[RMDB]
RNA sequence: GGGAACGACUCGAGUAGAGUCGAAAAAGUGCACUAGGUACGCCUAGUGCACAUUCCAGGACAUACUGCUGAGGAUGUCAAAAAUGCAGUUGGAUUCCUCAACUGGAUAGGCUACGGCCUAUCCAGAAAAAGACUUGGUUGUUCGCAACCAAGUCAAGUUAAUUUCAAUGUUCGCAUUGAAAUUAACAAAAGAAACAACAACAACAAC
Reactivity to DMS in 0.01 (KOAc 150mM, MgCl2 10mM, bicine 150mM(pH8.5), 24C), signal-to-noise 2, nucleotides 027 to 156: a100g030u000g010c010a030c010u000a010g010g030u000a090c300g050c010c010u000a000g020u010g000c000a010c000a030u000u000c030c040a200g030g010a050c010a020u000a030c010u010g030c060u020g000a120g030g000a080u010g020u010c010a040a070a130a130a150u010g010c040a170g010u000u000g000g000a200u000u000c000c010u000c020a060a110c000u010g000g010a000u000a020g010g020c010u000a120c300g110g030c000c000u010a000u000c010c000a000g000a000a060a100a150a140g010a020c010u000u010g010g000u000u000g030u000u000c300g050c010a030a000c010c000a010a000g000u000c010a010a100
Reactivity to 2A3 in 0.01 (KOAc 150mM, MgCl2 10mM, bicine 150mM(pH8.5), 24C), signal-to-noise 3, nucleotides 027 to 156: a000g010u000g010c000a010c000u000a000g030g000u040a040c190g070c000c010u000a030g000u000g000c000a000c000a010u000u000c010c000a010g060g000a010c030a070u140a060c030u030g100c030u090g030a040g080g110a210u220g190u300c090a010a060a030a010a040u150g010c030a020g000u010u050g050g040a130u060u030c010c000u050c060a060a080c040u000g000g000a000u000a000g000g020c010u020a030c300g070g000c010c010u000a000u000c000c000a000g000a000a000a000a000a000g010a010c000u010u010g000g000u010u020g000u020u040c130g000c060a000a040c010c000a000a000g000u000c000a000a000

This 207-nucleotide RNA was probed chemically with DMS and 2A3. The reactions ran in a buffer of 150 mM KOAc, 10 mM MgCl2 and 150 mM bicine (pH 8.5), at 24 C. 2A3 is a SHAPE reagent: it acylates the 2'-hydroxyl of flexible nucleotides of all four kinds. Reactivities are given for positions 27 through 156. For 2A3, 2,226 sequencing reads were counted. The data come from the RNA Mapping Database (RMDB), library M2RFPK.